[RMDB]
RNA sequence: GGGAACGACUCGAGUAGAGUCGAAAAUAGUUGCUGGACAGUACAAAGUAGCCUGCCAUGCCUGCCAUGUGUAUUACAGAGAAGUCUAUUAUUGAAACUCACAAGGUGAAAAAAUGUGGACCUGAUCAUAGUUGAGUGUGUCUGCCCCAUGCUUGCAGUAUGCUCGUUUAUUCGUAAACGAGCAUACAAAAGAAACAACAACAACAAC
Reactivity to 2A3 in 0.01 (KOAc 150mM, MgCl2 10mM, bicine 150mM(pH8.5), 24C), signal-to-noise 1, nucleotides 027 to 156: u160a000g130u090u010g030c030u030g000g050a050c020a040g010u130a040c050a110a120a020g000u020a050g090c000c000u000g090c010c000a040u150g010c010c070u060g030c030c050a110u020g000u000g000u060a170u240u050a130c070a010g070a030g020a130a000g000u000c040u020a070u120u020a010u010u120g090a120a040a010c040u040c080a040c030a050a040g060g000u010g120a050a080a000a000a000a020u110g010u010g060g000a010c030c080u010g000a060u050c000a050u040a080g030u070u110g010a030g010u040g000u000g000u020c050u010g010c010c000c010c000a030u140g020c000u030u000g010c010a020
Reactivity to DMS in 0.01 (KOAc 150mM, MgCl2 10mM, bicine 150mM(pH8.5), 24C), signal-to-noise 1, nucleotides 027 to 156: u000a070g010u000u020g030c000u000g050g010a110c090a120g010u000a140c080a090a090a120g000u000a140g030c070c020u000g030c020c030a150u000g000c060c030u000g030c090c110a070u010g040u020g000u000a050u000u000a140c060a150g010a080g000a060a060g010u000c070u000a110u010u010a130u000u020g000a080a080a070c040u010c050a020c100a030a080g010g010u000g010a000a060a100a060a060a130u000g000u040g000g000a050c030c020u000g010a100u000c070a080u000a100g020u010u000g000a060g010u000g000u000g020u000c020u000g010c030c000c010c020a130u020g010c120u020u000g030c050a120
Notes: This 207-nucleotide RNA was probed chemically with 2A3 and DMS. It was measured as part of the RMDB library OK3TST. DMS adducts were read by reverse transcription with MarathonRT. The reactions ran in a buffer of 150 mM KOAc, 10 mM MgCl2 and 150 mM bicine (pH 8.5), at 24 C. 2A3 adducts were read by reverse transcription with SuperScript II with manganese.